An RNA of 177 nucleotides, treated with DMS and 2A3 and read out base by base. For DMS the reverse transcriptase was MarathonRT. The RNA was probed in 150 mM KOAc, 10 mM MgCl2 and 150 mM bicine (pH 8.5) at 24 C.

[RMDB]
RNA sequence: GGGAACGACUCGAGUAGAGUCGAAAAGUGGUGAUGGGAUGAAAGGCAUCAGCAAUAAUGGUAAGAGCAGCAGUUCCCACGUAUCUUAAAGGUAAUACUGAUAUACUGAGCACUUCCUAUGUGCUGGGCUAACAGCUAGUUUCGACUAGCUGUUAGCAAAAGAAACAACAACAACAAC
Reactivity to DMS in 0.01 (KOAc 150mM, MgCl2 10mM, bicine 150mM(pH8.5), 24C), signal-to-noise 3, nucleotides 027 to 126: g020u000g000g020u020g000a080u010g000g000g010a110u000g000a100a100a080g030g000c040a040u010c050a030g030c040a050a060u010a080a070u000g000g020u010a030a060g010a070g020c030a060g000c040a100g000u010u000c020c020c010a190c200g010u000a020u010c050u000u010a050a100a030g000g010u020a060a100u010a130c070u010g000a060u010a060u010a060c070u000g010a070g000c010a060c040u010u000c070c080u000a060u010g010u000g010c030u010g020g000
Reactivity to 2A3 in 0.01 (KOAc 150mM, MgCl2 10mM, bicine 150mM(pH8.5), 24C), signal-to-noise 3, nucleotides 027 to 126: g080u050g010g000u030g010a070u070g040g020g010a050u050g050a120a030a060g040g000c020a030u010c020a030g030c020a020a100u150a120a050u100g050g020u050a050a020g030a010g030c010a010g020c010a010g010u040u010c000c030c000a000c070g020u020a040u030c020u020u170a160a090a000g000g050u060a050a020u060a170c050u050g050a020u040a010u010a140c060u050g050a000g010c010a020c030u130u080c020c030u080a080u150g010u000g000c000u000g030g050